[RMDB]
RNA sequence: GGGAACGACUCGAGUAGAGUCGAAAAGUAAAUACUUUCGAGUAUUUACAAAGAACGCUGCAACGCGCAGCGGGCUCGCGAGAGCACGCCGCAGCAAAAUAAAAACUGCUGGAUUCGUCCAGCAGAAUAUUACCAUUAGAUUCGUCUAAUGGUAAUAAAAAGAAACAACAACAACAAC
Reactivity to DMS in 0.01 (KOAc 150mM, MgCl2 10mM, bicine 150mM(pH8.5), 24C), signal-to-noise 6, nucleotides 027 to 126: g000u010a000a010a000u010a010c000u000u000u010c150g020a030g020u000a000u000u000u000a010c000a080a130a100g000a130a100c150g010c070u000g010c030a120a100c170g010c110g010c160a060g010c000g010g000g000c000u000c010g000c300g000a180g000a020g000c000a010c000g010c000c040g010c010a040g020c020a130a060a100a080u010a050a040a100a120a110c000u000g000c000u000g000g000a020u000u000c190g000u000c000c000a010g000c000a000g000a030a040
Reactivity to 2A3 in 0.01 (KOAc 150mM, MgCl2 10mM, bicine 150mM(pH8.5), 24C), signal-to-noise 4, nucleotides 027 to 126: g000u000a000a010a010u000a000c000u020u040u170c160g040a010g010u000a000u000u020u000a000c000a000a100a010g090a090a010c080g000c030u030g000c020a140a090c120g060c020g000c140a010g010c000g010g010g000c000u000c000g010c040g030a020g000a000g080c010a000c000g000c010c040g010c000a020g000c010a030a040a110a000u130a020a110a020a010a030c000u010g000c000u000g000g000a020u030u050c160g030u030c020c000a000g000c000a000g000a000a010